[RMDB]
RNA sequence: GGGAACGACUCGAGUAGAGUCGAAAACUGUGACAUCCAUCUGCAAAGGGUAAAAGUUGUCCGACCCAAAGCUCGUUUCUAAGGCCUUGAGUUUCUCAAGACGACGAGAAGCACCAAUAACCUUUAUCCCAUCUGCAAUUAAGUGUUCGACAAUGGACAUUUAGGAGGCAUUCGUGCCUCCUAAAUGAAAAGAAACAACAACAACAAC
Reactivity to 2A3 in 0.01 (KOAc 150mM, MgCl2 10mM, bicine 150mM(pH8.5), 24C), signal-to-noise 4, nucleotides 027 to 156: c020u040g050u090g090a000c010a050u050c040c010a080u070c060u110g040c070a080a060a060g010g020g020u100a110a060a010a030g020u080u050g030u060c080c100g020a060c040c010c000a040a030a070g040c010u010c030g020u010u110u000c120u130a100a060g060g020c020c000u020u010g020a040g050u080u110u040c050u010c010a030a070g030a060c060g010a010c050g000a000g020a060a000g040c020a010c070c020a010a060u050a030a060c010c010u000u050u050a070u140c010c010c010a050u080c070u090g030c030a020a080u030u070a200a070g050u030g060u120u100c020g040a040c090a110a050u150g040g030a010
Reactivity to DMS in 0.01 (KOAc 150mM, MgCl2 10mM, bicine 150mM(pH8.5), 24C), signal-to-noise 2, nucleotides 027 to 156: c050u000g020u010g000a120c080a140u000c040c040a120u000c070u040g030c040a130a060a100g000g020g050u000a070a050a080a110g010u010u000g010u000c030c050g020a100c030c020c020a030a110a100g000c010u010c030g000u000u000u000c070u020a060a140g020g020c000c010u020u000g010a080g020u010u000u010c060u010c020a010a080g010a050c050g000a070c030g000a060g000a100a120g010c020a060c040c030a020a100u010a070a060c020c010u000u000u000a100u000c020c000c060a150u000c080u010g000c030a080a100u040u000a050a060g000u000g040u010u000c060g010a070c070a070a090u020g020g010a230